About this RNA: Chemical mapping of a 177-nucleotide RNA with DMS and 2A3. The RNA was probed in 150 mM KOAc, 10 mM MgCl2 and 150 mM bicine (pH 8.5) at 24 C. For DMS, 718 sequencing reads were counted. For 2A3 the reverse transcriptase was SuperScript II with manganese. It was measured as part of the RMDB library M2PK90.
RNA sequence: GGGAACGACUCGAGUAGAGUCGAAAAAACAGCUGCACGUACGUACGAGCAGUUUUCGAAAUAAACGUACGUACGAAAUAAAUAAAUUCUACUCGAUGCGAAACAAAGCAAAGACGUUCCCAGGGAACCAUAAAUGCUGGUUCGCCAGCAUUUAUGGAAAAGAAACAACAACAACAAC
Reactivity to DMS in 0.01 (KOAc 150mM, MgCl2 10mM, bicine 150mM(pH8.5), 24C), signal-to-noise 1, nucleotides 027 to 126: a030a070c070a080g110c030u000g050c170a110c000g000u000a000c000g000u020a030c000g030a070g000c230a170g010u000u000u000u020c130g000a000a090a020u000a110a160a090c020g000u000a000c000g010u000a020c000g000a160a080a000u000a060a080a070u000a050a120a020u010u000c000u000a010c000u000c000g050a250u000g000c000g010a030a160a090c300a030a050a030g000c050a100a170a020g000a050c000g000u000u000c000c030c090a100g010g000g010a070a090
Reactivity to 2A3 in 0.01 (KOAc 150mM, MgCl2 10mM, bicine 150mM(pH8.5), 24C), signal-to-noise 2, nucleotides 027 to 126: a000a010c100a050g110c050u170g050c100a000c070g010u020a000c020g000u040a000c010g030a020g090c090a040g060u040u010u010u080c080g110a120a030a010u120a030a080a010c010g000u010a000c020g010u040a000c000g000a000a020a090u140a000a050a000u080a010a030a010u030u020c010u000a000c010u000c000g040a040u110g000c000g040a150a090a010c070a080a030a030g030c020a010a100a070g030a000c010g030u000u000c000c000c000a000g000g060g000a010a040